RNA sequence: GGGAACGACUCGAGUAGAGUCGAAAAUGAAUUCUACUUGUAUUUCCUAUCUGUCUGACGGGCGGUGGAAAGGGUGCGAGGGAAAACCUAUCGGGAAAGUCAUCCUCACCCCUGGGAGAGAUUCUCUGUAUUUCCUGUGCAUGCACAAACACAAGUAAAACUGGUAUAAGUUCGCUUAUACCAGUUUAAAAGAAACAACAACAACAAC
Reactivity to DMS in 0.01 (KOAc 150mM, MgCl2 10mM, bicine 150mM(pH8.5), 24C), signal-to-noise 1, nucleotides 027 to 156: u000g000a080a040u000u000c020u000a010c020u010u030g000u000a100u020u010u000c000c010u000a060u000c030u010g010u000c020u020g090a120c050g000g010g010c070g000g010u000g040g000a050a080a050g020g020g060u000g010c020g020a130g000g020g000a080a070a090a130c020c020u000a110u000c090g040g010g010a060a090a130g000u020c040a210u000c030c000u010c030a110c010c000c010c030u010g000g000g010a050g010a150g010a090u000u000c030u000c010u000g000u000a110u000u000u000c000c010u000g040u000g010c060a070u000g000c070a100c060a080a080a040c020a030c030a050a070g000u020a050
Reactivity to 2A3 in 0.01 (KOAc 150mM, MgCl2 10mM, bicine 150mM(pH8.5), 24C), signal-to-noise 3, nucleotides 027 to 156: u070g040a010a050u060u020c020u030a050c000u020u010g010u110a090u050u020u030c010c010u050a110u070c030u040g190u010c020u050g100a050c030g030g020g040c100g040g030u030g010g060a130a160a150g010g020g000u070g030c020g010a030g000g010g010a070a040a060a070c010c000u050a140u200c090g030g000g050a090a100a000g080u040c010a020u020c010c010u020c000a020c000c000c000c010u010g010g010g010a050g000a010g000a010u110u020c040u030c030u080g090u080a130u040u040u000c020c020u050g020u040g050c010a040u110g030c100a020c020a060a100a030c140a030c010a070a020g250u300a020
This 207-nucleotide RNA was probed chemically with DMS and 2A3. It was measured as part of the RMDB library OK3TST. For DMS, 2,414 sequencing reads were counted. Reactivities are given for positions 27 through 156. The RNA was probed in 150 mM KOAc, 10 mM MgCl2 and 150 mM bicine (pH 8.5) at 24 C.